An RNA of 207 nucleotides, treated with 2A3 and DMS and read out base by base. For 2A3, 2,839 sequencing reads were counted. Conditions: 150 mM KOAc, 10 mM MgCl2 and 150 mM bicine (pH 8.5), 24 C. It was measured as part of the RMDB library RNAMAK.
[RMDB]
RNA sequence: GGGAACGACUCGAGUAGAGUCGAAAAUCAGAUCGUUCGCGAUCUGACAUCAUCCUAAGUCGCUACGAGGUUACAGCGUUGAUCGUUGUCGGAAACGACAACGGGAGCUGUACCGAUGAGUAGCGAUAUGGAACUGCGUGACAUUUCGAUGUCACAAAACCUUGGAACCAUUCGUGGUUCCAAGGUUAAAAGAAACAACAACAACAAC
Reactivity to 2A3 in 0.01 (KOAc 150mM, MgCl2 10mM, bicine 150mM(pH8.5), 24C), signal-to-noise 3, nucleotides 027 to 156: u020c000a000g010a000u010c000g010u120u080c300g010c020g190a010u000c000u000g000a010c000a150u140c020a040u000c010c000u060a170a020g040u010c000g000c000u000a000c000g030a060g070g040u280u120a000c000a000g020c010g120u150u010g010a020u000c000g000u010u000g000u000c000g000g060a090a050a060c020g000a010c000a000a000c000g000g000g010a020g000c010u000g000u010a010c020c000g070a070u140g150a060g000u000a010g000c030g000a000u000a000u010g020g010a030a070c090u220g050c110g090u000g000a000c000a030u020u150u090c270g100a030u010g000u000c000a000c010a000a120
Reactivity to DMS in 0.01 (KOAc 150mM, MgCl2 10mM, bicine 150mM(pH8.5), 24C), signal-to-noise 1, nucleotides 027 to 156: u000c000a020g000a060u000c000g020u010u000c300g050c030g020a000u000c020u020g020a000c000a070u000c090a110u000c010c010u000a110a300g010u000c000g020c000u010a000c000g010a160g000g030u000u000a020c000a020g030c000g000u000u010g000a110u000c020g050u010u000g050u000c000g050g000a170a130a210c000g000a020c000a000a020c000g010g000g000a040g030c000u000g050u000a020c060c000g000a170u020g000a220g040u000a000g020c070g000a020u000a020u000g020g000a090a160c140u020g000c070g020u000g060a010c000a090u010u000u000c160g030a060u000g010u000c000a010c010a050a030